[RMDB]
RNA sequence: GGGAACGACUCGAGUAGAGUCGAAAAGGUGACUGCGCUGCAAAUUUGCGCUACCCGGGAACAUUUUUGAGCUCGCUCUAUUCGGCUUUACAAGUAGCAGUCACGAUCGGCGCUCAGUGCCUUGGGGGAAACCUAAGUGGUUCGCCACUUAGGUUUCAAAAGAAACAACAACAACAAC
Reactivity to DMS in 0.01 (KOAc 150mM, MgCl2 10mM, bicine 150mM(pH8.5), 24C), signal-to-noise 2, nucleotides 027 to 126: g030g010u000g000a050c030u000g010c020g060c060u000g010c100a050a100a130u000u000u000g020c100g010c060u010a050c030c010c050g010g000g010a100a090c060a070u010u020u000u020u000g010a040g020c010u000c050g010c120u000c050u010a220u020u000c030g010g000c040u000u020u030a070c190a060a090g030u000a070g020c020a040g020u000c040a010c060g000a070u000c060g020g020c060g000c040u000c070a090g000u000g010c020c030u000u000g000g000g000g000
Reactivity to 2A3 in 0.01 (KOAc 150mM, MgCl2 10mM, bicine 150mM(pH8.5), 24C), signal-to-noise 1, nucleotides 027 to 126: g110g000u040g030a000c020u020g000c020g010c010u080g000c010a040a030a170u080u070u140g000c040g000c030u010a020c000c020c020g070g030g000a080a000c020a050u150u030u090u130u120g030a020g000c110u030c100g010c040u060c020u040a100u120u080c050g010g000c020u110u080u120a060c060a110a000g020u010a030g050c040a010g040u040c030a010c050g000a060u050c040g000g040c020g000c050u050c060a020g030u030g020c070c000u060u100g010g000g000g020

Record summary: Chemical mapping of a 177-nucleotide RNA with DMS and 2A3. For 2A3, 945 sequencing reads were counted. The reactions ran in a buffer of 150 mM KOAc, 10 mM MgCl2 and 150 mM bicine (pH 8.5), at 24 C. For DMS, 1,511 sequencing reads were counted. It was measured as part of the RMDB library OK2TST. 2A3 adducts were read by reverse transcription with SuperScript II with manganese.